The data come from the RNA Mapping Database (RMDB), library OK2TRN. Chemical mapping of a 177-nucleotide RNA with 2A3 and DMS. For DMS, 1,013 sequencing reads were counted. The RNA was probed in 150 mM KOAc, 10 mM MgCl2 and 150 mM bicine (pH 8.5) at 24 C. DMS (dimethyl sulfate) methylates the pairing face of unpaired adenines and cytosines. For DMS the reverse transcriptase was MarathonRT.
[RMDB]
RNA sequence: GGGAACGACUCGAGUAGAGUCGAAAACAUGUCGUACGUACUGACUAGGUACUAGUACUGUGGAUCGAUCUCAUGUGGAUCCUGACGACGUGGAUCGUAGCAGUCGAUCCUAUCUGGAUCGAGGAUCUAUGCGCCACUCGUUCGCGAGUGGCGCAUAAAAAGAAACAACAACAACAAC
Reactivity to 2A3 in 0.01 (KOAc 150mM, MgCl2 10mM, bicine 150mM(pH8.5), 24C), signal-to-noise 1, nucleotides 027 to 126: c030a040u050g070u090c010g030u150a100c050g000u000a000c000u000g270a180c030u120a180g150g100u060a000c060u060a030g050u040a020c020u090g130u090g160g010a050u100c040g020a000u000c220u020c100a150u270g010u010g120g000a010u000c000c040u050g050a000c080g010a000c000g040u040g000g000a060u030c010g040u040a010g060c060a070g100u000c030g000a000u000c000c000u090a230u050c100u100g030g000a040u090c000g000a000g060g000a010u000c010
Reactivity to DMS in 0.01 (KOAc 150mM, MgCl2 10mM, bicine 150mM(pH8.5), 24C), signal-to-noise 1, nucleotides 027 to 126: c000a040u000g030u000c050g000u000a090c190g010u000a010c020u020g020a080c100u000a140g010g000u000a080c120u000a060g000u020a030c010u000g000u020g000g000a160u020c030g000a070u000c160u000c090a110u000g050u000g000g010a060u000c020c000u020g000a090c080g000a010c010g030u010g000g000a070u000c020g020u000a130g000c110a260g010u000c030g000a010u010c010c000u030a040u010c250u010g000g000a070u000c020g010a040g000g000a110u000c100